[RMDB]
RNA sequence: GGGAACGACUCGAGUAGAGUCGAAAACUGUCCUCGUUCGACGACUGCAAGCCGGAGACCCUGCAGAAGGUCGAGGAGUGGAUCGACCGCGUUUACCGCGAUACAGGUGCUCAGGUCAAGAUGAUCGCGUACGUAAGAAAUUCGUUUCUUACGUACGAAAAGAAACAACAACAACAAC
Reactivity to 2A3 in 0.01 (KOAc 150mM, MgCl2 10mM, bicine 150mM(pH8.5), 24C), signal-to-noise 9, nucleotides 027 to 126: c030u040g060u080c000c010u040c020g060u060u060c030g040a060c030g020a040c040u050g030c070a080a050g030c020c020g040g000a030g040a090c010c000c000u000g000c000a040g020a260a050g080g000u010c010g000a020g020g030a110g080u180g040g040a070u020c010g020a010c000c010g000c020g020u040u100u090a110c100c010g010c010g020a020u060a130c040a020g000g030u040g020c010u010c030a030g020g010u030c040a030a040g070a120u180g010a060u070c040g000
Reactivity to DMS in 0.01 (KOAc 150mM, MgCl2 10mM, bicine 150mM(pH8.5), 24C), signal-to-noise 9, nucleotides 027 to 126: c110u010g010u000c020c010u000c060g020u000u000c030g010a090c050g010a160c040u000g010c100a100a160g010c040c030g000g010a090g000a060c060c010c010u000g010c040a050g000a120a110g010g010u000c010g010a030g010g010a130g030u010g010g010a100u000c020g010a040c020c000g010c040g010u000u010u010a110c190c070g000c020g010a120u000a090c060a040g000g010u000g000c020u000c020a060g010g000u000c060a090a100g000a110u000g000a090u000c070g000